[RMDB]
RNA sequence: GGGAACGACUCGAGUAGAGUCGAAAAGGAAAUCGUCGUUUUCGAUGAACAGGGGCGGCGUUGCUGCACUUGUCGGCUGGGUACGGCAGUUUUGGGAUGAACCCGACAGAAUUAGAUGAGAUUGCAGGGCAAAUAAUUCUUUCGAGAAUUAUUUGCCAAAAGAAACAACAACAACAAC
Reactivity to 2A3 in 0.01 (KOAc 150mM, MgCl2 10mM, bicine 150mM(pH8.5), 24C), signal-to-noise 2, nucleotides 027 to 126: g030g030a010a050a040u040c000g040u000c040g000u020u050u060u120c050g070a040u090g050a050a050c040a050g000g010g090g000c030g000g000c010g050u080u070g000c010u000g000c010a040c050u070u070g030u060c040g010g000c020u070g000g000g060u090a050c020g010g000c020a020g000u040u020u100u120g070g010g010a040u070g030a080a040c020c000c000g020a000c030a030g110a050a070u130u130a090g060a120u120g060a040g030a070u000u110g070c070a060g080
Reactivity to DMS in 0.01 (KOAc 150mM, MgCl2 10mM, bicine 150mM(pH8.5), 24C), signal-to-noise 2, nucleotides 027 to 126: g020g010a060a090a080u010c050g050u000c010g000u010u000u000u020c010g030a170u030g010a090a090c080a130g000g000g000g000c030g000g020c030g010u000u010g010c010u000g030c040a040c040u010u000g020u000c030g020g000c110u000g030g000g020u000a080c090g020g010c030a060g010u000u000u000u020g000g010g010a170u010g010a030a120c040c010c010g000a100c130a070g000a050a070u000u000a080g010a080u010g000a080g000a110u000u000g010c120a050g010
The record gives the reactivity of an RNA of 177 nucleotides to 2A3 and DMS. The DMS profile rests on 2,269 reads. The 2A3 profile rests on 1,437 reads. For 2A3 the reverse transcriptase was SuperScript II with manganese. DMS adducts were read by reverse transcription with MarathonRT. The data come from the RNA Mapping Database (RMDB), library OK2TRN. 2A3 is a SHAPE reagent: it acylates the 2'-hydroxyl of flexible nucleotides of all four kinds. The RNA was probed in 150 mM KOAc, 10 mM MgCl2 and 150 mM bicine (pH 8.5) at 24 C. Reactivities are given for positions 27 through 126.